[RMDB]
RNA sequence: GGGAACGACUCGAGUAGAGUCGAAAAUUACAGGUGCCUGCCACCACCUCCAGCUAAUUUUUGUAUUUUUAGUAGAGGCGGGGUUUCACCACGUUGGCCAGGCUGGUCUGGACCUCCGGAUCUCAGACUACUGGCCUAGUUUCGACUAGGCCAGUAGAAAAGAAACAACAACAACAAC
Reactivity to DMS in 0.01 (KOAc 150mM, MgCl2 10mM, bicine 150mM(pH8.5), 24C), signal-to-noise 2, nucleotides 027 to 126: u020u040a090c250a160g000g020u010g010c070c040u020g000c000c000a160c020c010a060c020c000u020c020c110a200g020c020u000a010a020u000u030u000u050u130g000u090a000u020u000u010u000u010a010g000u000a110g010a080g020g000c010g000g000g010g000u020u010u020c010a080c010c000a060c140g040u020u000g000g000c060c030a040g010g000c060u050g000g020u010c040u020g000g000a030c140c100u010c040c030g010g000a080u000c030u000c020a050g000a270
Reactivity to 2A3 in 0.01 (KOAc 150mM, MgCl2 10mM, bicine 150mM(pH8.5), 24C), signal-to-noise 3, nucleotides 027 to 126: u260u150a060c050a050g000g000u000g070c000c050u020g030c000c020a230c000c010a010c010c020u010c010c010a090g020c040u050a030a070u050u030u080u180u140g210u160a300u040u050u010u010u060a050g040u030a010g000a000g020g000c040g000g020g000g000u050u070u060c040a030c020c000a020c050g040u070u130g000g010c050c010a000g100g000c020u100g110g000u070c000u020g120g080a170c000c000u070c020c020g000g070a070u000c050u020c050a030g010a100